[RMDB]
RNA sequence: GGGAACGACUCGAGUAGAGUCGAAAAGCUCUGUAAUGGGAUGGGAUCCGAAGCCCCAUUGAGGGAUAAUACAGGCUCUCCCAUCCAACUCCUAUUCCAACAGGUCCUCGUCGUACAGAGUGGUAACUAAGGUAUAGCUCCUUCGGGAGCUAUACAACUCAUAAUUGUGGUUCGCCACAAUUAUGAGAAAAGAAACAACAACAACAAC
Reactivity to 2A3 in 0.01 (KOAc 150mM, MgCl2 10mM, bicine 150mM(pH8.5), 24C), signal-to-noise 3, nucleotides 027 to 156: g000c010u000c010u010g030u030a130a120u100g120g000g000a000u000g000g000g010a050u180c000c010g010a060a030g050c020c010c000c010a110u120u200g070a300g010g020g000a020u070a200a060u170a200c120a070g000g010c010u010c000u000c010c010c010a000u000c000c000a000a000c000u000c000c010u030a090u160u150c040c000a040a010c020a140g040g000u000c010c060u090c080g190u040c000g010u030a010c000a000g000a030g010u050g020g030u110a100a070c080u050a090a070g070g000u000a000u000a000g000c000u000c010c000u000u040c060g080g000g010a000g000c000u000a010u000a020c000a000a010
Reactivity to DMS in 0.01 (KOAc 150mM, MgCl2 10mM, bicine 150mM(pH8.5), 24C), signal-to-noise 2, nucleotides 027 to 156: g010c010u000c010u000g010u000a050a110u000g010g010g010a030u010g020g020g000a080u000c050c010g010a130a180g020c010c000c000c000a300u000u000g000a110g000g030g010a060u000a060a150u000a100c100a180g010g000c020u010c110u010c000c010c010a080u010c010c020a060a030c040u000c010c060u000a120u000u000c180c140a070a120c090a050g000g010u000c010c000u000c090g010u000c030g020u000a040c020a030g000a020g030u010g000g050u000a080a100c070u000a100a130g050g000u000a000u000a010g000c000u000c000c000u000u010c300g020g030g000a010g010c010u000a040u000a000c000a080a100
Structure probing data (2A3 and DMS) for a 207-nucleotide construct. The RNA was probed in 150 mM KOAc, 10 mM MgCl2 and 150 mM bicine (pH 8.5) at 24 C.